[RMDB]
RNA sequence: GGGAACGACUCGAGUAGAGUCGAAAACUUUAAAGUGUACAAUUGAGUGGCUUUUAGUAUAUUCACAAGAUUGUGCAACCAUCACCACUGUCUAACUCCAGAACAUUUCUAUCAUCACAAAAAGAAACACUAAUUACCCAUUCGUGGGUAAUUAGUGAAAAGAAACAACAACAACAAC
Reactivity to DMS in 0.01 (KOAc 150mM, MgCl2 10mM, bicine 150mM(pH8.5), 24C), signal-to-noise 3, nucleotides 027 to 126: c060u000u000u000a050a060a150g010u000g000u020a030c010a010a020u010u000g000a300g020u010g000g000c260u000u000u020u020a120g020u020a050u020a090u000u000c020a020c010a030a300g000a040u000u000g020u000g010c010a040a100c090c050a060u000c090a040c030c030a070c050u000g000u010c070u000a040a120c060u000c040c020a120g000a060a070c070a060u000u000u000c040u000a050u010c050a060u000c040a060c080a020a060a050a040a070g000a120a040a140
Reactivity to 2A3 in 0.01 (KOAc 150mM, MgCl2 10mM, bicine 150mM(pH8.5), 24C), signal-to-noise 3, nucleotides 027 to 126: c030u150u160u180a080a180a060g070u020g010u020a010c010a020a020u030u020g010a010g010u010g010g070c050u070u170u060u060a060g060u070a100u090a040u290u070c020a000c000a000a030g010a060u020u000g000u020g010c000a030a040c020c010a040u050c020a010c040c000a040c040u050g020u040c020u040a080a050c020u010c020c010a030g020a080a050c040a070u020u070u050c030u070a080u060c030a030u060c050a030c080a110a130a030a000a030g130a050a120a020

Conditions: 150 mM KOAc, 10 mM MgCl2 and 150 mM bicine (pH 8.5), 24 C. An RNA of 177 nucleotides, treated with DMS and 2A3 and read out base by base. The DMS profile rests on 2,016 reads. For DMS the reverse transcriptase was MarathonRT. In probing experiments dimethyl sulfate is read out at A N1 and C N3, which are open when not base-paired. The 2A3 profile rests on 3,158 reads.